An RNA of 207 nucleotides, treated with 2A3 and read out base by base. Source: RMDB library M2RFPK, as collected in RNAgym.

RNA sequence: GGGAACGACUCGAGUAGAGUCGAAAAUUAAUACUGCUACAUUUUUAAGACCCUUAGUUAUUUAGCUUUACCGCCCAGGAUGCGGUGCAGCGUUCCUGCAAUAUCCAGGGCACCUAGGUGCAGCCUUCAUGCCUCAUGCCGUUCGCGGCAUGAGGAAGGGUUAAGUGUAGUUCGCUACACUUAACCCAAAAGAAACAACAACAACAAC
Reactivity to 2A3 in 0.01 (KOAc 150mM, MgCl2 10mM, bicine 150mM(pH8.5), 24C), signal-to-noise 1, nucleotides 027 to 156: u010u030a010a070u060a260c050u040g050c010u000a010c050a250u060u060u010u040u100a080a010g100a120c000c020c030u000u100a020g080u090u060a130u140u140u070a060g030c040u050u040u000a070c040c030g000c000c030c000a010g060g040a020u050g010c060g010g000u000g010c000a000g000c030g100u150u130c000c000u010g000c020a030a030u000a030u200c020c000a010g000g010g000c000a030c000c000u080a070g020g030u070g040c030a020g090c010c000u070u100c060a050u090g010c010c000u010c000a020u000g020c000c000g050u050u020c260g000c010g050g000c000a000u000g000a000g000g000a000a010